[RMDB]
Chemical mapping of a 177-nucleotide RNA with 2A3 and DMS.

RNA sequence: GGGAACGACUCGAGUAGAGUCGAAAAGUACGAUAGUGUGAUGAUCCGGUACUCGCGUACAUAGACAGACGCUAGCACUGUGGAUCCACUAGGCCAUGGCACUAGCUACAUGCUCUAGCAUCAUGCGGAAGAGCAUCGCAUUCGUGCGAUGCUCUUCAAAAGAAACAACAACAACAAC
Reactivity to 2A3 in 0.01 (KOAc 150mM, MgCl2 10mM, bicine 150mM(pH8.5), 24C), signal-to-noise 2, nucleotides 027 to 126: g180u090a020c040g050a100u100a080g030u020g050u050g040a070u030g010a040u020c010c040g020g000u000a030c010u000c030g000c020g020u050a070c060a100u140a050g070a080c060a040g020a030c030g010c000u000a000g000c020a000c010u060g070u190g060g020a060u000c000c010a040c030u070a060g030g040c010c020a030u050g000g000c000a020c080u020a040g040c010u080a060c010a100u070g020c010u000c010u030a020g000c010a040u050c010a010u140g040c040g030
Reactivity to DMS in 0.01 (KOAc 150mM, MgCl2 10mM, bicine 150mM(pH8.5), 24C), signal-to-noise 2, nucleotides 027 to 126: g010u010a060c120g000a120u000a090g050u000g040u010g020a050u000g000a060u000c010c000g000g010u000a030c020u000c100g000c080g000u010a040c030a120u000a150g010a150c140a100g010a080c110g000c000u000a030g020c030a040c020u010g010u000g000g000a060u000c040c220a110c090u000a030g010g010c140c000a020u000g000g020c110a110c070u020a050g010c060u020a100c120a050u000g010c060u000c010u010a030g010c040a020u000c050a030u000g010c040g020
Notes:
Reactivities are given for positions 27 through 126. For 2A3, 1,874 sequencing reads were counted. The data come from the RNA Mapping Database (RMDB), library OK2TRN. Conditions: 150 mM KOAc, 10 mM MgCl2 and 150 mM bicine (pH 8.5), 24 C.